[RMDB]
RNA sequence: GGGAACGACUCGAGUAGAGUCGAAAAUAAGCACCUCGUUAGGAGAGGCGGCUACACGAACAUAGGCCACUGACCCCGAACGUCGAGAGACGCCCCGGGUCAGGACAGCUCUUCCCGGCUUAAGGGUAAAAUCACAACGUCUUCGGACGUUGUGAAAUCAAGAUAGAGGGUUCGCCCUCUAUCUUGAAAAAGAAACAACAACAACAAC
Reactivity to 2A3 in 0.01 (KOAc 150mM, MgCl2 10mM, bicine 150mM(pH8.5), 24C), signal-to-noise 2, nucleotides 027 to 156: u110a000a030g040c010a040c000c010u010c030g080u100u250a140g040g110a120g040a000g050g000c090g080g000c020u070a030c110a020c130g080a200a000c060a130u160a070g080g130c020c010a050c040u020g000a010c000c000c000c030g020a090a020c000g000u000c010g000a000g000a000g000a170c000g080c010c010c000c000g000g000g000u000c000a000g000g000a010c010a000g000c010u000c020u060u030c000c000c010g010g000c050u130u130a090a080g060g020g000u070a070a090a030a080u060c000a010c010a010a010c000g000u020c000u020u040c130g100g000a000c000g010u000u000g000u020g000a000a000a000
Reactivity to DMS in 0.01 (KOAc 150mM, MgCl2 10mM, bicine 150mM(pH8.5), 24C), signal-to-noise 1, nucleotides 027 to 156: u020a080a110g000c030a040c010c010u000c000g000u020u000a260g040g050a080g020a200g020g020c030g000g000c040u010a070c100a120c070g010a050a070c060a160u010a080g060g000c030c010a150c020u000g010a040c040c010c010c060g010a030a040c020g000u030c000g010a300g000a300g010a020c010g010c020c010c100c200g000g060g000u000c020a020g010g010a060c020a120g000c000u020c020u010u000c010c010c020g060g020c010u000u010a070a040g000g000g000u010a050a040a100a090u000c000a010c000a000a000c000g010u020c000u000u000c300g060g040a010c000g010u000u020g000u010g020a000a050a070